The record gives the reactivity of an RNA of 207 nucleotides to 2A3. The reactions ran in a buffer of 150 mM KOAc, 10 mM MgCl2 and 150 mM bicine (pH 8.5), at 24 C. Reactivities are given for positions 27 through 156. Source: RMDB library M2RFPK, as collected in RNAgym. The 2A3 profile rests on 1,259 reads.
[RMDB]
RNA sequence: GGGAACGACUCGAGUAGAGUCGAAAAGUUUACGCUCCAAGAUCGGUGGAUAGCAGCCCUACCAAUAUCUAGGAGAACUGUGCUAUGUUUAGAAGAUUAGGUAGUCUCUAAACAGAACAAUUUACCUCAUACGUUAGGACGUUCGCGUCCUAACGAAGUAGGUGGUGUACUUCGGUACACCACCUACAAAAGAAACAACAACAACAAC
Reactivity to 2A3 in 0.01 (KOAc 150mM, MgCl2 10mM, bicine 150mM(pH8.5), 24C), signal-to-noise 2, nucleotides 027 to 156: g000u030u100u120a000c030g010c010u010c030c010a000a010g010a010u040c090g060g020u010g000g020a110u080a100g090c040a030g030c020c010c010u050a040c010c010a050a040u050a060u230c020u030a050g000g020a010g020a020a020c070u130g010u020g070c040u040a000u090g010u000u000u000a080g000a260a020g000a060u080u010a010g040g020u050a020g000u000c000u000c020u010a000a000a000c010a040g050a040a010c110a070a040u000u080u110a030c010c000u020c020a120u080a190c020g010u000u000a000g000g000a000c000g000u000u010c240g010c020g060u010c000c000u000a000a000c000g000a000a000

2A3 adducts were read by reverse transcription with SuperScript II with manganese.